[RMDB]
Structure probing data (DMS) for a 177-nucleotide construct. The reactions ran in a buffer of 150 mM KOAc, 10 mM MgCl2 and 150 mM bicine (pH 8.5), at 24 C.

RNA sequence: GGGAACGACUCGAGUAGAGUCGAAAAGAUAUGGACCAUGUAGGGAGUCGGUUCUAAGUGGUCGGUAUUCGGAAACGAAUACCGACCACUUAGAAUGCGACGACGAUCUAUGCAUGGUCCUAAGUCACUCAUAGUUUGUGUUCGCACAAACUAUGAGAAAAGAAACAACAACAACAAC
Reactivity to DMS in 0.01 (KOAc 150mM, MgCl2 10mM, bicine 150mM(pH8.5), 24C), signal-to-noise 1, nucleotides 027 to 126: g000a040u020a300u020g000g000a020c000c030a020u000g010u000a080g010g010g010a220g000u000c000g000g010u000u000c000u000a000a010g010u010g010g050u010c000g050g000u000a000u010u020c000g000g000a220a150a290c000g010a050a010u000a000c000c000g000a000c020c020a000c000u010u010a000g050a010a010u000g000c040g020a070c000g000a100c120g010a190u010c050u020a090u010g000c020a020u000g000g000u000c000c000u040a000a060g010u000c050a280